RNA sequence: GGGAACGACUCGAGUAGAGUCGAAAACUCUCCAAAGUUAAUUACGCACGGCCAAUUUUCAGUAGCAAAACCCUCUGUUGAUUUGCAAAGCGUAUCUGGUGACUUGAUCAAGUAUAAGAGGGACGCAUAAUCCUGAGGAGUUCGCUCCUCAGGAUUAAAAAGAAACAACAACAACAAC
Reactivity to DMS in 0.01 (KOAc 150mM, MgCl2 10mM, bicine 150mM(pH8.5), 24C), signal-to-noise 1, nucleotides 027 to 126: c090u000c000u030c030c010a090a050a100g010u000u000a100a130u000u000a030c120g000c060a120c140g020g010c060c040a090a010u000u000u000u010c040a040g040u000a110g000c080a070a040a100a140c110c020c010u000c030u010g010u010u010g010a090u000u020u000g020c050a060a140a140g030c000g040u000a020u000c130u000g010g020u010g000a050c050u000u000g010a110u000c040a040a010g040u000a060u020a140a070g000a090g010g000g000a040c140g020c040a130